Chemical mapping of a 177-nucleotide RNA with 2A3 and DMS.
For 2A3 the reverse transcriptase was SuperScript II with manganese.
RNA sequence: GGGAACGACUCGAGUAGAGUCGAAAACACAGAAUCUUCGGAUUCUGUGAAAGGAACAAAAACAUGCAAAUGUUCCAAAAAGCAUGAAGGACAAAAGUCCAAAAACACAUCGCUUCGGCGAUGUGAAGAGAUUGAAGUAGUUCGCUACUUCAAUCUCAAAAGAAACAACAACAACAAC
Reactivity to 2A3 in 0.01 (KOAc 150mM, MgCl2 10mM, bicine 150mM(pH8.5), 24C), signal-to-noise 3, nucleotides 027 to 126: c000a000c000a000g010a000a000u000c000u050u080c140g120g010a010u010u000c000u000g000u000g010a000a000a000g050g000a060a010c040a030a140a030a030a010c020a010u070g010c010a020a090a200u110g030u050u030c010c030a060a110a010a010a000g010c020a010u060g070a140a130g000g010a010c030a020a300a040a050g000u000c000c000a090a040a000a000a000c010a000c000a010u000c000g000c020u030u060c160g100g000c000g000a000u000g000u000g000a000a010
Reactivity to DMS in 0.01 (KOAc 150mM, MgCl2 10mM, bicine 150mM(pH8.5), 24C), signal-to-noise 2, nucleotides 027 to 126: c040a000c000a000g010a010a000u000c000u000u010c260g040g000a010u000u000c000u000g010u000g000a020a050a090g040g000a070a050c110a040a080a050a120a150c010a020u000g000c000a060a100a190u000g010u000u000c020c010a070a010a050a110a130g040c030a010u000g010a150a130g010g000a040c020a080a100a120a130g000u000c000c010a070a040a070a120a170c000a000c000a000u000c000g000c010u000u020c210g030g000c000g030a000u000g000u000g000a030a070

The reactions ran in a buffer of 150 mM KOAc, 10 mM MgCl2 and 150 mM bicine (pH 8.5), at 24 C. For DMS the reverse transcriptase was MarathonRT. For DMS, 1,594 sequencing reads were counted. The data come from the RNA Mapping Database (RMDB), library M2PK50.